[RMDB]
Conditions: 150 mM KOAc, 10 mM MgCl2 and 150 mM bicine (pH 8.5), 24 C. Chemical mapping of a 207-nucleotide RNA with 2A3. It was measured as part of the RMDB library OK3TST.

RNA sequence: GGGAACGACUCGAGUAGAGUCGAAAAACAGACAAGAGAGACAUCAAAUUCGUUCUGGAUUACAUCAGUGAUAUUUUCCAGUGUGAUGACAUUCACAUGAUUUCAGAAUUUUUCUCCUUUUUUAGAACAUUUGGCCAUCCCACCCUAGAAGCUGAAGUCAUCGUUGACGAUUCGUCGUCAACGAUGAAAAAGAAACAACAACAACAAC
Reactivity to 2A3 in 0.01 (KOAc 150mM, MgCl2 10mM, bicine 150mM(pH8.5), 24C), signal-to-noise 2, nucleotides 027 to 156: a000c020a010g100a010c010a040a020g070a000g030a010g050a160c020a090u120c070a120a060a060u220u090c060g090u080u020c010u010g010g010a020u030u080a070c040a060u060c030a010g050u000g100a060u090a080u130u070u050u060c000c020a070g040u060g060u080g210a060u060g020a030c050a070u010u030c000a020c020a040u030g030a050u070u090u030c010a030g050a030a050u020u010u020u000u050c070u060c040c000u080u080u040u000u020u240a110g030a100a010c010a090u000u000u150g000g000c000c000a020u010c020c010c030a040c020c050c000u050a060g020a070a010g130c050u120g030a050a000g000